Conditions: 150 mM KOAc, 10 mM MgCl2 and 150 mM bicine (pH 8.5), 24 C. An RNA of 177 nucleotides, treated with 2A3 and DMS and read out base by base. For 2A3 the reverse transcriptase was SuperScript II with manganese. As a SHAPE reagent, 2A3 marks flexible, mostly unpaired nucleotides at the ribose 2'-OH. Source: RMDB libraries RFM100 and RFMREP, as collected in RNAgym.

[RMDB]
RNA sequence: GGGAACGACUCGAGUAGAGUCGAAAAGCCAGUGAACGUAUAUAUUCCAUUCGUGGAAUCAUACGGUAGGAUACUCGAUAUUCUACUGUCGUGCUCGCGGUUGAUCUUAGAUUAAUCCUUGUAAAAGGUGAUCAUUUAUCUUCGGAUAAAUGAUCACAAAAGAAACAACAACAACAAC
Reactivity to 2A3 in 0.01 (KOAc 150mM, MgCl2 10mM, bicine 150mM(pH8.5), 24C), signal-to-noise 7, nucleotides 027 to 126: g010c010c020a040g060u060g200a110a010c010g030u000a020u010a010u010a010u100u000c000c010a020u030u090c200g080u050g010g010a000a000u010c020a020u010a030c020g000g010u020a050g020g010a030u060a140c040u040c110g090a140u020a110u070u010c000u000a010c000u020g030u020c010g010u020g030c010u000c020g030c040g010g020u000u030g030a050u020c050u100u140a050g010a040u000u080a030a040u060c020c030u050u130g150u220a040a110a060a010g110
Reactivity to DMS in 0.01 (KOAc 150mM, MgCl2 10mM, bicine 150mM(pH8.5), 24C), signal-to-noise 4, nucleotides 027 to 126: g000c010c010a140g010u020g010a090a060c030g010u010a030u000a100u020a060u000u000c000c000a050u000u040c170g010u000g030g010a010a000u000c250a060u010a040c000g020g010u000a050g000g010a030u010a040c110u000c100g000a050u000a050u010u000c000u000a010c020u010g010u000c010g030u000g000c020u000c020g000c180g000g000u000u000g010a050u000c030u010u000a140g010a060u020u010a050a060u020c030c060u000u000g000u020a050a090a100a070g000